[RMDB]
RNA sequence: GGGAACGACUCGAGUAGAGUCGAAAAGCAGCCGGGCCACGAUCGCUGCGAACACUUGAGCGGAUCCUCCGGAGCUCUUGUGGAUUAGGACGUUCUCGACGGUCUGCGGAUUCGAGUUCGUCCGAAAGGCUACGUUCUCGUUCGCGAGGACGUAGCCAAAAGAAACAACAACAACAAC
Reactivity to 2A3 in 0.01 (KOAc 150mM, MgCl2 10mM, bicine 150mM(pH8.5), 24C), signal-to-noise 3, nucleotides 027 to 126: g050c030a000g050c020c010g000g000g000c020c050a070c030g020a010u010c010g000c040u050g010c000g010a060a010c040a020c040u030u100g030a000g010c020g100g050a150u080c020c020u060c000c050g050g050a060g000c000u030c020u030u050g020u000g000g000a030u020u170a030g000g000a000c020g010u020u000c000u000c000g080a110c110g060g090u080c050u080g110c120g100g020a060u080u050c000g000a000g000u000u000c000g000u000c010c000g000a000a000a000
Reactivity to DMS in 0.01 (KOAc 150mM, MgCl2 10mM, bicine 150mM(pH8.5), 24C), signal-to-noise 2, nucleotides 027 to 126: g040c040a020g000c040c150g000g000g000c070c040a090c120g010a060u040c070g000c020u000g020c030g000a080a110c000a040c040u010u000g000a000g000c000g000g000a160u000c060c070u000c000c040g010g000a230g000c010u000c020u010u000g000u000g000g010a140u040u010a140g000g000a050c000g020u000u010c000u000c000g000a030c300g000g020u040c070u000g000c070g000g010a090u040u000c000g040a010g000u010u000c020g040u000c010c000g000a030a020a020
The data come from the RNA Mapping Database (RMDB), library OK1LIB. Chemical mapping of a 177-nucleotide RNA with 2A3 and DMS. The reactions ran in a buffer of 150 mM KOAc, 10 mM MgCl2 and 150 mM bicine (pH 8.5), at 24 C. Values cover nucleotides 27 to 126. For DMS, 2,172 sequencing reads were counted. For DMS the reverse transcriptase was MarathonRT. Values are in units of 0.01, from 0 to 300, in steps of 10.